[RMDB]
RNA sequence: GGGAACGACUCGAGUAGAGUCGAAAAGGCAACAUUCCGAGGGGACCGUCCCUCGGCAAUGGCGAAUGGGACCCAGAAAUCUCUCUAGAUUCCGAUAGAGAAUCGAGAGAAAACUGGCUCUCCCUUACACAUAGAUAUGCUUCGGCAUAUCUAUGUGAAAAGAAACAACAACAACAAC
Reactivity to 2A3 in 0.01 (KOAc 150mM, MgCl2 10mM, bicine 150mM(pH8.5), 24C), signal-to-noise 3, nucleotides 027 to 126: g120g000c060a110a050c000a220u010u030c000c000g000a000g040g030g030g050a250c100c030g300u300c010c010c000u000c000g000g000c000a000a010u000g010g000c040g080a090a050u100g000g000g010a030c060c000c020a010g020a040a300a000u010c010u000c000u010c030u060a090g000a020u000u000c020c030g200a290u170a200g180a030g000a040a000u010c010g000a000g000a000g000a010a010a000a010c000u000g000g000c020u010c010u010c000c010c000u010u050a030
Reactivity to DMS in 0.01 (KOAc 150mM, MgCl2 10mM, bicine 150mM(pH8.5), 24C), signal-to-noise 4, nucleotides 027 to 126: g020g020c040a090a120c020a030u000u000c000c000g000a030g020g000g010g000a150c300c300g010u010c000c000c000u000c010g000g010c120a000a010u000g000g010c160g000a100a140u000g020g000g020a010c240c010c000a020g000a050a120a190u010c000u000c000u000c010u000a170g010a010u000u000c000c010g000a180u020a110g000a160g020a020a010u000c000g000a040g000a010g000a000a010a060a140c000u000g000g000c040u000c070u000c000c010c000u000u010a140
This 177-nucleotide RNA was probed chemically with 2A3 and DMS. DMS adducts were read by reverse transcription with MarathonRT. The data come from the RNA Mapping Database (RMDB), library VIROID. Values are in units of 0.01, from 0 to 300, in steps of 10. The reactions ran in a buffer of 150 mM KOAc, 10 mM MgCl2 and 150 mM bicine (pH 8.5), at 24 C.